[RMDB]
RNA sequence: GGGAACGACUCGAGUAGAGUCGAAAAGUGUGGGUCGUCGACGGACGGGCCACUGCGUUGCGGCACGCCGGACGACCCGCCGGUGUUCGGCGACUGGGCGGCCGCGACGGUCAGGUGAUCGAACUCACAGUACGCCAUAGUUCGCUAUGGCGUACUGAAAAGAAACAACAACAACAAC
Reactivity to 2A3 in 0.01 (KOAc 150mM, MgCl2 10mM, bicine 150mM(pH8.5), 24C), signal-to-noise 3, nucleotides 027 to 126: g110u080g010u010g030g010g300u010c000g010u000c030g070a250c140g150g020a020c000g000g010g030c010c000a020c010u040g080c020g030u010u010g000c000g000g050c130a080c300g000c000c010g060g070a040c060g060a040c010c000c010g000c010c000g000g010u260g210u180u270c000g000g000c040g000a060c030u160g080g060g000c010g000g000c000c010g010c030g010a010c010g020g040u100c040a010g000g110u030g040a110u120c080g030a050a040c020u010c040a070
Reactivity to DMS in 0.01 (KOAc 150mM, MgCl2 10mM, bicine 150mM(pH8.5), 24C), signal-to-noise 3, nucleotides 027 to 126: g010u000g020u000g010g000g010u010c000g010u000c010g000a150c300g010g030a030c020g000g000g020c010c000a040c010u020g010c030g010u000u010g010c000g000g010c010a080c020g020c000c000g010g000a100c100g000a100c170c080c000g010c030c000g000g020u010g010u020u010c010g010g000c000g000a090c050u010g010g020g010c000g010g000c000c010g010c030g000a020c010g010g010u000c090a090g010g010u010g010a090u000c070g000a090a160c070u000c060a150